Structure probing data (DMS and 2A3) for a 177-nucleotide construct.

[RMDB]
RNA sequence: GGGAACGACUCGAGUAGAGUCGAAAAUACACCUCACUGAUUCUCGCUAAGUCGGUGGCAGACAGCGGCGGUGCAGGCGGGGGAUUGCCCAAGCGGCAGAGGACGGAGGGCGUGCUGCAGGACGCUGCCUCGUGCAACAAUUCGUUGUUGCACGAGGAAAAGAAACAACAACAACAAC
Reactivity to DMS in 0.01 (KOAc 150mM, MgCl2 10mM, bicine 150mM(pH8.5), 24C), signal-to-noise 3, nucleotides 027 to 126: u010a140c150a130c020c000u000c030a060c040u010g000a170u010u010c050u000c070g030c040u010a140a180g040u000c030g020g010u010g000g020c110a110g010a050c070a070g000c040g010g000c030g020g000u010g000c070a030g020g010c060g000g000g010g010g010a090u000u000g000c020c010c040a100a110g010c100g020g020c020a050g010a120g000g000a080c080g000g000a130g000g000g000c030g020u020g030c030u000g000c070a060g000g010a080c110g010c040u000g030
Reactivity to 2A3 in 0.01 (KOAc 150mM, MgCl2 10mM, bicine 150mM(pH8.5), 24C), signal-to-noise 2, nucleotides 027 to 126: u120a020c040a060c010c010u000c000a040c000u040g030a140u140u000c040u030c050g000c050u070a060a080g070u040c010g080g020u070g090g000c000a030g020a080c000a010g040c020g070g000c020g050g040u030g050c060a030g010g010c040g010g010g000g010g000a080u060u170g010c030c000c020a030a040g080c130g030g000c000a020g030a050g120g020a080c040g030g030a090g050g010g000c020g010u060g030c000u040g000c020a000g030g050a010c020g000c040u060g000
Overview:
The data come from the RNA Mapping Database (RMDB), library OK2TRN. The RNA was probed in 150 mM KOAc, 10 mM MgCl2 and 150 mM bicine (pH 8.5) at 24 C. In probing experiments dimethyl sulfate is read out at A N1 and C N3, which are open when not base-paired. For 2A3, 3,033 sequencing reads were counted.